[RMDB]
RNA sequence: GGGAACGACUCGAGUAGAGUCGAAAAUGGGCGAUACCCAAUGAGUUUACGGGAGGCACGUUUUGCUUAAUAUCAAACCCAAUGUCAUCGUCCUUAAUAUCUAUUCCUAUUGAGGCGACGGAAGACCUCUACGCAUUGGAUGAGGAAAGCUCGGGCAAGUAAUGAUCCAGUUCGCUGGAUCAUUACUAAAAGAAACAACAACAACAAC
Reactivity to 2A3 in 0.01 (KOAc 150mM, MgCl2 10mM, bicine 150mM(pH8.5), 24C), signal-to-noise 6, nucleotides 027 to 156: u080g030g010g000c050g020a030u060a110c010c000c050a020a070u140g020a080g100u130u210u180a050c060g010g010g000a040g010g000c030a020c080g010u040u040u090u070g010c020u050u090a090a030u080a080u150c070a050a040a080c030c010c050a040a040u100g110u080c030a030u020c030g070u150c000c000u010u050a060a070u070a020u100c070u080a160u060u100c010c000u030a070u050u090g020a010g030g000c010g020a020c040g050g030a060a020g040a080c010c000u000c010u050a070c060g010c010a000u030u080g020g020a030u060g050a040g060g040a080a060a010g020c020u030c030g020g010g000c050a050
Reactivity to DMS in 0.01 (KOAc 150mM, MgCl2 10mM, bicine 150mM(pH8.5), 24C), signal-to-noise 2, nucleotides 027 to 156: u000g030g010g010c010g000a150u000a220c000c040c000a070a100u000g010a080g020u000u020u010a100c090g000g000g030a120g010g010c060a080c120g030u030u000u010u020g000c060u000u000a050a130u000a140u010c060a060a040a070c020c010c010a060a110u010g020u000c040a040u000c020g000u000c000c020u000u000a050a050u010a100u000c070u020a210u010u020c050c050u000a080u000u000g010a050g000g030c020g010a050c030g010g020a160a150g000a110c020c020u000c020u000a080c040g000c020a070u010u000g020g020a060u010g010a140g010g010a060a080a120g010c040u000c020g000g010g070c040a050